[RMDB]
RNA sequence: GGGAACGACUCGAGUAGAGUCGAAAACCUCACUACAUUUUACUGUUCCUAAAGAAUUUGUGACAGGUACAGUAUAACGUAUUGCAAGGUUUAUCAGUUCCUAUAAACAGGUAAAUAACAAUAUAUGAAAAGCAAAGACUGUUCGCAGUCUUUGCAAGACAUCCUGUACCUUCGGGUACAGGAUGUCAAAAGAAACAACAACAACAAC
Reactivity to 2A3 in 0.01 (KOAc 150mM, MgCl2 10mM, bicine 150mM(pH8.5), 24C), signal-to-noise 2, nucleotides 027 to 156: c000c000u040c010a000c020u010a000c010a050u040u020u010u000a010c000u000g020u010u100c000c000u070a050a040a100g170a300a240u170u160u230g220u170g050a040c090a070g000g000u000a000c000a000g010u000a010u010a000a000c000g000u010a000u010u050g040c060a030a030g040g030u010u010u010a100u100c040a010g010u010u040c000c000u040a090u220a130a050a000c100a010g000g080u090a070a170a000u220a150a040c010a110a000u170a000u110a090u300g110a000a030a040a010g000c000a000a000a000g000a000c000u010g020u110u070c210g000c040a000g000u000c000u000u000u040g000c010a000a010